[RMDB]
RNA sequence: GGGAACGACUCGAGUAGAGUCGAAAAGAUAUGGAUUCUCCUUUUGACGAAGCGCACAUCGGAAACGAUGUGAUGCUUCGAUAAGGAGAUCCUAAGUCAAAGUCGCAUGUCUUCGGACAUGCGACAAGCAUUAAGAACUGUUCGCAGUUCUUAAUGCAAAAGAAACAACAACAACAAC
Reactivity to DMS in 0.01 (KOAc 150mM, MgCl2 10mM, bicine 150mM(pH8.5), 24C), signal-to-noise 4, nucleotides 027 to 126: g010a050u000a300u010g000g000a010u020u000c010u000c000c010u000u010u000u000g020a210c160g000a010a000g010c000g000c010a010c000a010u000c000g000g010a130a060a150c010g000a010u010g020u000g010a020u020g020c000u000u000c010g000a040u000a010a010g000g010a010g010a020u000c000c000u000a030a130g010u000c030a110a100a170g010u000c000g010c000a010u000g000u010c000u000u010c240g020g000a030c000a000u000g000c010g000a000c000a000a050
Reactivity to 2A3 in 0.01 (KOAc 150mM, MgCl2 10mM, bicine 150mM(pH8.5), 24C), signal-to-noise 6, nucleotides 027 to 126: g020a010u090a070u150g020g020a050u300u140c000u020c000c030u090u110u100u170g250a160c040g000a000a000g010c010g000c010a000c000a010u000c010g020g050a090a070a020c020g000a000u010g000u000g000a020u040g000c000u000u010c000g000a000u000a000a000g000g000a000g000a000u000c000c000u010a110a020g040u020c060a130a040a070g000u000c000g000c010a000u000g000u000c010u070u140c300g070g010a010c010a000u000g000c000g000a000c000a010a000
The record gives the reactivity of an RNA of 177 nucleotides to DMS and 2A3. The DMS profile rests on 6,097 reads. For 2A3, 16,927 sequencing reads were counted. For 2A3 the reverse transcriptase was SuperScript II with manganese.